[RMDB]
RNA sequence: GGGAACGACUCGAGUAGAGUCGAAAACCAGCAGAUGUCUGGAUUUGGUAGCCAGGGCCUGGAGCCGGAUGCUGAGAACGAGGCCUGCAACUCAUUUCCCCAUUAAACAUUCUGAGAACAUCUGCACAGGAAUAAAGGACUUCGGUCCUUUAUUCCUAAAAGAAACAACAACAACAAC
Reactivity to DMS in 0.01 (KOAc 150mM, MgCl2 10mM, bicine 150mM(pH8.5), 24C), signal-to-noise 2, nucleotides 027 to 126: c000c070a160g060c000a040g000a000u000g020u000c040u020g010g040a000u000u000u050g060g000u000a070g040c030c070a090g000g010g120c050c010u010g000g000a140g010c150c140g010g000a070u000g020c000u070g000a240g050a060a300c050g030a110g030g030c040c010u000g020c200a100a100c000u000c020a010u000u060u000c050c000c030c060a120u030u050a060a010a170c130a110u050u050c000u000g020a050g010a010a010c010a020u000c000u010g050c040a090c230
Reactivity to 2A3 in 0.01 (KOAc 150mM, MgCl2 10mM, bicine 150mM(pH8.5), 24C), signal-to-noise 2, nucleotides 027 to 126: c020c000a020g000c000a000g000a000u010g040u020c000u020g000g030a070u070u070u150g110g010u110a060g040c010c060a190g000g070g040c060c070u040g020g000a060g040c000c020g050g010a030u080g000c040u070g110a010g010a190a040c060g000a010g030g040c000c050u050g010c010a020a040c000u010c060a050u000u050u020c010c060c000c030a080u060u170a020a030a050c030a090u160u120c090u130g070a020g000a130a000c000a000u010c000u000g000c000a000c020